[RMDB]
RNA sequence: GGGAACGACUCGAGUAGAGUCGAAAAGAUAUGGAUGGUACUGAUGACCUUACGUAACAUCCAUCGGAAACGAUGGUGGUAAGCAAGGUGAGAGUCCUAAGUCAAAAUGACGCGUUCGCGCGUCAAACACUAAUCCAUCGUUCGCGAUGGAUUAGUGAAAAGAAACAACAACAACAAC
Reactivity to 2A3 in 0.01 (KOAc 150mM, MgCl2 10mM, bicine 150mM(pH8.5), 24C), signal-to-noise 3, nucleotides 027 to 126: g050a030u110a070u170g070g020a020u060g060g150u190a050c020u060g170a300u160g070a100c020c000u000u020a010c020g020u030a040a040c000a270u110c000c000a010u000c000g030g000a050a030a010c000g010a010u020g020g020u010g000g010u030a040a010g030c040a080a130g030g000u050g050a210g020a020g070u000c010c020u030a160a050g070u060c070a020a020a080a240u100g010a000c000g000c010g030u020u100c290g000c000g000c030g110u000c000a000a000a000
Reactivity to DMS in 0.01 (KOAc 150mM, MgCl2 10mM, bicine 150mM(pH8.5), 24C), signal-to-noise 5, nucleotides 027 to 126: g010a070u010a260u000g000g000a040u000g000g020u000a050c070u000g010a140u010g000a050c180c020u000u000a030c040g010u000a030a050c080a010u010c000c000a010u000c010g010g000a100a060a180c000g020a010u010g000g030u000g000g000u000a020a050g000c030a060a030g000g030u000g010a130g000a150g020u010c010c010u000a080a130g000u010c090a050a070a090a150u000g000a010c000g020c010g030u000u010c190g020c010g010c000g020u000c000a010a050a190
Source: RMDB library TTRDEL, as collected in RNAgym. An RNA of 177 nucleotides, treated with 2A3 and DMS and read out base by base. In probing experiments dimethyl sulfate is read out at A N1 and C N3, which are open when not base-paired. The RNA was probed in 150 mM KOAc, 10 mM MgCl2 and 150 mM bicine (pH 8.5) at 24 C. For 2A3, 7,613 sequencing reads were counted. High 2A3 reactivity points to a flexible backbone, as in loops and unpaired stretches.